[RMDB]
RNA sequence: GGGAACGACUCGAGUAGAGUCGAAAAGAUAUGGAAGAGCUACCCACCUAGACUAUUCGUAGAACUACGAGAUGUUGUCGGAAACGACAACGCUCGCUACGAAUAGUCUAGAGGCUCUUCCUAAGUCCUAACGGUUAAGGUUCGCCUUAACCGUUAGAAAAGAAACAACAACAACAAC
Reactivity to 2A3 in 0.01 (KOAc 150mM, MgCl2 10mM, bicine 150mM(pH8.5), 24C), signal-to-noise 3, nucleotides 027 to 126: g050a120u280a230u300g020g000a010a020g000a000g000c030u140a300c040c010c010a040c010c010u000a000g010a000c000u010a010u020u010c010g010u020a010g030a190a190c230u220a070c300g050a040g180a300u200g020u000u000g000u010c000g000g090a070a100a040c020g000a010c000a000a020c000g020c020u000c020g010c000u010a000c020g000a000a000u010a010g000u010c000u000a010g000a000g000g010c000u030c000u010u000c000c000u000a000a000g020u060c020
Reactivity to DMS in 0.01 (KOAc 150mM, MgCl2 10mM, bicine 150mM(pH8.5), 24C), signal-to-noise 4, nucleotides 027 to 126: g010a170u010a120u000g010g000a000a000g000a020g020c010u000a140c050c040c040a300c140c000u000a020g010a010c000u000a000u000u000c000g010u000a010g000a130a040c120u010a300c020g000a000g000a020u010g030u000u000g020u000c010g020g010a110a070a260c030g010a010c000a000a020c000g010c000u000c000g010c000u000a000c000g010a020a000u000a000g010u010c000u000a000g010a030g040g000c000u000c000u000u000c000c000u000a000a080g000u010c100
Background
Conditions: 150 mM KOAc, 10 mM MgCl2 and 150 mM bicine (pH 8.5), 24 C. Chemical mapping of a 177-nucleotide RNA with 2A3 and DMS. It was measured as part of the RMDB library TTRINS.